[RMDB]
RNA sequence: GGGAACGACUCGAGUAGAGUCGAAAAUCCUAAGUCACCACCAUCUAGAGAGGUUAAUGGGAGACAAUCGGAAACGAUUGUCAUCGAUCAUUAACUACCCACCUCUAGACAUUUGGUGAUAUGGAAAAACAGGACGAAACUUCGGUUUCGUCCUGAACUUCAAGACUGAGUUCGCUCAGUCUUGAAGAAAAGAAACAACAACAACAAC
Reactivity to 2A3 in 0.01 (KOAc 150mM, MgCl2 10mM, bicine 150mM(pH8.5), 24C), signal-to-noise 3, nucleotides 027 to 156: u000c000c000u040a120a040g010u000c000a000c010c000a020c040c000a000u020c000u000a000g000a000g010a020g000g000u000u000a000a000u020g040g010g010a030g000a000c020a010a000u000c000g030g030a090a030a060c020g000a010u030u010g020u010c010a110u230c010g030a060u040c010a010u010u010a010a010c020u030a040c050c060c020a080c010c000u000c000u000a000g000a010c010a050u090u070u070g010g000u010g000a000u000a060u050g030g040a000a070a060a050a040c010a000g010g000a000c000g000a010a000a000c020u050u150c260g060g000u000u000u000c000g000u000c000c000u000g010a000a000
Reactivity to DMS in 0.01 (KOAc 150mM, MgCl2 10mM, bicine 150mM(pH8.5), 24C), signal-to-noise 2, nucleotides 027 to 156: u000c020c000u000a000a300g020u000c010a050c000c000a050c300c270a080u010c010u000a040g000a030g020a220g040g000u000u000a000a020u010g000g030g040a100g000a050c000a000a010u000c010g000g000a250a080a220c000g020a040u000u000g010u010c000a030u000c110g010a130u000c040a010u000u000a010a020c000u000a010c030c010c040a300c140c000u000c010u000a040g030a020c030a100u010u010u010g010g050u000g000a060u020a140u000g010g000a140a020a060a130a130c010a010g040g010a040c000g000a030a010a000c000u000u000c300g050g050u000u020u000c000g000u010c000c000u010g050a000a040